[RMDB]
RNA sequence: GGGAACGACUCGAGUAGAGUCGAAAACCAGAUGACGGUCCUGCCAUGAGACCGCAACGAGAGCAUGUCGCAUCGAAUGGACUCGGGGAGUCGGCAGCUUGCCCCACAGAUGAGCGCCUAAUGCCGGAAGAGACGUGCAACUUCGGUUGCACGUCAAACAUUACUGGUUCUUCGGAACCAGUAAUGUAAAAGAAACAACAACAACAAC
Reactivity to DMS in 0.01 (KOAc 150mM, MgCl2 10mM, bicine 150mM(pH8.5), 24C), signal-to-noise 2, nucleotides 027 to 156: c000c010a180g010a090u000g000a040c010g000g020u000c010c000u000g070c050c200a050u010g000a100g020a030c010c000g050c020a020a060c000g000a190g030a170g020c020a150u000g040u000c050g040c070a060u000c020g020a100a300u000g030g000a060c050u000c050g000g010g010g070a090g050u000c050g010g010c020a060g010c030u000u000g000c010c000c000c030a230c080a160g020a100u000g000a040g040c050g130c060c030u000a060a100u000g020c000c010g020g040a170a090g000a260g020a020c000g010u000g000c010a000a000c000u000u000c230g060g030u000u000g000c000a000c100g000u030c010a030a040
Reactivity to 2A3 in 0.01 (KOAc 150mM, MgCl2 10mM, bicine 150mM(pH8.5), 24C), signal-to-noise 3, nucleotides 027 to 156: c020c000a020g070a190u140g030a050c030g000g030u020c020c010u040g170c040c060a150u150g010a040g010a160c000c010g000c000a040a040c040g070a020g000a010g070c040a040u110g010u110c040g000c040a090u030c030g060a070a060u090g010g020a100c040u050c120g030g000g000g000a080g060u070c030g030g050c000a010g030c030u080u140g040c000c000c030c010a090c030a020g100a070u170g020a030g030c010g050c060c010u070a160a010u130g040c040c000g010g050a080a040g080a010g010a050c000g000u010g040c000a000a000c000u050u050c200g080g000u000u000g000c000a010c000g000u010c000a000a000
Background
This 207-nucleotide RNA was probed chemically with DMS and 2A3. Source: RMDB library M2RFPK, as collected in RNAgym. Values cover nucleotides 27 to 156. Reactivities are rounded to 0.1 and cut off at 0 and 3. DMS adducts were read by reverse transcription with MarathonRT.